[RMDB]
RNA sequence: GGGAACGACUCGAGUAGAGUCGAAAAUUAGGUAGUGCCAUCUAGUAGCCAGAAAUUUGGGAACUGGCUGGGCAUGAUGGCUAAUACCUGUAAUCCCAGCACUUUGGGAGGCUUAGGUGGGUGGAUCCCGCUGUACAUAUUUCGAUAUGUACAGCGGAAAAGAAACAACAACAACAAC
Reactivity to DMS in 0.01 (KOAc 150mM, MgCl2 10mM, bicine 150mM(pH8.5), 24C), signal-to-noise 6, nucleotides 027 to 126: u010u040a010g000g020u000a010g010u020g000c010c010a000u000c010u010a230g020u020a010g000c010c000a010g000a070a060a180u020u050u050g030g000g020a170a100c010u000g000g020c010u000g000g000g080c120a090u030g010a010u000g000g000c000u000a070a090u000a000c000c000u000g000u000a080a110u000c010c000c000a120g010c150a060c100u020u020u020g020g010g000a100g000g010c080u000u030a040g000g010u010g010g010g010u010g000g000a080u010c080
Reactivity to 2A3 in 0.01 (KOAc 150mM, MgCl2 10mM, bicine 150mM(pH8.5), 24C), signal-to-noise 6, nucleotides 027 to 126: u180u100a010g020g000u010a010g020u020g060c010c000a010u000c020u010a030g050u070a000g060c010c000a030g190a100a140a100u260u300u300g110g010g050a040a080c000u000g000g000c000u000g000g050g050c080a010u140g000a000u000g000g000c010u050a100a030u000a020c000c020u010g010u030a050a060u000c000c000c000a000g080c040a050c040u090u100u040g020g000g010a070g020g010c070u150u140a070g010g030u080g010g060g000u060g040g020a040u070c000